[RMDB]
RNA sequence: GGGAACGACUCGAGUAGAGUCGAAAAUGGCGGCCUCAGCGAGAGCACGGCGCGCCUGAUGCCGCACGUCCUCGUCAACAUGACGAAUGUGACGUCGAUGGAGGGCACGAUCGUGCUGCAUGGCGCAAUACCUGCUACGCUUCGGCGUAGCAGGUAUAAAAGAAACAACAACAACAAC
Reactivity to 2A3 in 0.01 (KOAc 150mM, MgCl2 10mM, bicine 150mM(pH8.5), 24C), signal-to-noise 3, nucleotides 027 to 126: u190g190g020c060g090g130c030c010u080c100a010g010c050g100a140g020a010g090c000a020c010g010g000c010g000c000g000c000c000u010g000a010u100g040c040c000g080c030a000c020g000u020c000c000u010c010g000u020c020a300a300c090a300u280g020a000c010g050a050a090u120g100u200g010a010c000g010u020c020g000a020u020g000g010a020g000g000g030c000a000c020g040a240u120c020g000u000g020c000u010g000c010a010u080g030g000c000g000c010a010
Reactivity to DMS in 0.01 (KOAc 150mM, MgCl2 10mM, bicine 150mM(pH8.5), 24C), signal-to-noise 2, nucleotides 027 to 126: u000g030g020c030g000g010c020c020u020c170a220g020c050g010a140g000a050g020c010a040c000g010g020c020g020c020g020c000c000u000g020a300u000g020c030c000g030c220a030c010g050u000c000c010u010c010g010u000c000a110a100c240a170u010g000a020c010g000a040a080u020g030u000g010a020c010g010u000c020g030a070u000g000g000a300g010g000g030c010a000c010g000a050u000c000g040u000g000c010u000g010c060a060u000g010g040c030g010c020a140